[RMDB]
RNA sequence: GGGAACGACUCGAGUAGAGUCGAAAAGAUAUGGAUUCGCUCGAUAAGCAAGGGUCGGAAACGACCCAUUGCUUUUGACGAGCGAUCCUAAGUCAAAUCUAAAGACCCGUUCGCGGGUCUUUAGAAACAUUCUUUAGGAGUUCGCUCCUAAAGAAUGAAAAGAAACAACAACAACAAC
Reactivity to 2A3 in 0.01 (KOAc 150mM, MgCl2 10mM, bicine 150mM(pH8.5), 24C), signal-to-noise 1, nucleotides 027 to 126: g000a020u000a010u040g010g010a030u300u140c010g040c000u000c000g020a050u090a300a010g000c000a020a010g000g000g040u000c000g000g020a050a000a000c010g010a000c040c050c000a050u000u000g010c000u010u020u080u110g050a010c020g000a000g000c010g010a000u010c020c000u010a040a000g000u000c010a000a100a300u040c010u040a040a000a000g010a020c020c030c020g020u070u040c260g010c020g210g000g120u000c010u010u000u000a000g000a000a000a000
Reactivity to DMS in 0.01 (KOAc 150mM, MgCl2 10mM, bicine 150mM(pH8.5), 24C), signal-to-noise 1, nucleotides 027 to 126: g000a020u010a190u030g000g000a030u010u000c010g010c010u010c000g030a070u020a020a010g020c000a020a000g010g000g000u000c000g030g010a030a040a140c000g000a030c010c010c000a010u000u000g010c000u000u000u000u020g000a160c060g000a020g000c000g000a000u000c000c000u000a030a110g000u010c020a130a170a220u010c000u000a030a010a020g000a020c000c010c000g010u000u000c160g020c010g040g000g000u000c000u000u000u000a010g000a050a100a180